An RNA of 177 nucleotides, treated with DMS and read out base by base.
In probing experiments dimethyl sulfate is read out at A N1 and C N3, which are open when not base-paired.
Values are in units of 0.01, from 0 to 300, in steps of 10.
Conditions: 150 mM KOAc, 10 mM MgCl2 and 150 mM bicine (pH 8.5), 24 C.
[RMDB]
RNA sequence: GGGAACGACUCGAGUAGAGUCGAAAAUAAAAGAGCGUACGACUCACAAAGACUGUACGACAGUCUGACUCUCUCGUACGCUUCUUCAACGAGAGAGAGAGUGCGUUGGAACAAGUGUGAAAAAAAACUUGCAACUUCGAUUCGUCGAAGUUGCAAGAAAAGAAACAACAACAACAAC
Reactivity to DMS in 0.01 (KOAc 150mM, MgCl2 10mM, bicine 150mM(pH8.5), 24C), signal-to-noise 1, nucleotides 027 to 126: u000a040a090a070a170g000a050g020c040g010u000a020c010g000a040c100u000c000a100c150a060a200a010g000a000c000u000g000u020a200c300g030a100c020a000g000u020c000u000g000a200c080u020c030u000c050u000c000g020u000a040c030g000c080u010u000c030u000u010c200a090a000c070g000a060g000a060g000a020g020a150g010a070g000u000g000c060g040u000u000g000g000a170a110c100a000a090g010u000g000u000g020a000a000a000a040a110a060a070a070